[RMDB]
RNA sequence: GGGAACGACUCGAGUAGAGUCGAAAAAAUGAAUAGCAAUUUUUUAUGGUGAGACAAUUAAUGACAAAGAUGUCAGUUAAUGCUUUUUUUAUAAAAAGACUCCAGAGUGCCUAUUUAGAGGUGUUCUAAUCCUUGGCAUAUUCGUAUGCCAAGGAUUAAAAGAAACAACAACAACAAC
Reactivity to 2A3 in 0.01 (KOAc 150mM, MgCl2 10mM, bicine 150mM(pH8.5), 24C), signal-to-noise 2, nucleotides 027 to 126: a000a000u090g030a090a060u110a040g040c000a060a080u010u000u010u030u020u020a050u030g040g000u050g020a110g000a070c020a040a010u040u000a050a050u110g000a010c010a020a260a050g190a230u110g030u000c000a000g080u050u050a000a030u020g000c000u070u060u010u040u000u000u030a120u100a040a040a000a000a000g000a000c020u000c020c000a010g050a000g000u000g030c000c000u050a100u120u090u020a150g020a040g000g010u110g020u030u000c000u010

Conditions: 150 mM KOAc, 10 mM MgCl2 and 150 mM bicine (pH 8.5), 24 C. The record gives the reactivity of an RNA of 177 nucleotides to 2A3. Values cover nucleotides 27 to 126.